[RMDB]
RNA sequence: GGGAACGACUCGAGUAGAGUCGAAAACUUGACUAAUCCUCAUGGAUGCAGAAACUAUGUAGGGUACGACUGUUCGUCGAUUAAAAAGUUACAUGAGCUGGGUUAAAUACGUCGUGAGACAGUAUGGUUUCUAUCUUCUAGAGGGAAUUAGAAUAUACGCUCACUUAGUGUUCGCACUAAGUGAGCGAAAAGAAACAACAACAACAAC
Reactivity to 2A3 in 0.01 (KOAc 150mM, MgCl2 10mM, bicine 150mM(pH8.5), 24C), signal-to-noise 1, nucleotides 027 to 156: c030u050u040g030a000c000u000a000a000u000c010c000u000c030a150u190g000g030a020u080g090c070a000g040a000a010a000c000u010a010u130g030u120a150g100g010g020u090a000c020g010a000c040u090g020u110u000c000g060u050c010g010a020u080u210a050a050a000a000a000g050u140u070a190c050a250u090g030a010g030c030u110g000g010g160u100u090a080a050a000u230a070c030g050u030c040g000u000g020a100g030a010c010a010g050u010a030u060g010g000u000u000u000c000u010a050u000c010u060u020c010u010a010g000a010g060g000g000a020a020u000u000a000g010a020a020u130a000u010a010
Structure probing data (2A3) for a 207-nucleotide construct. 2A3 adducts were read by reverse transcription with SuperScript II with manganese. Source: RMDB library PDB130, as collected in RNAgym.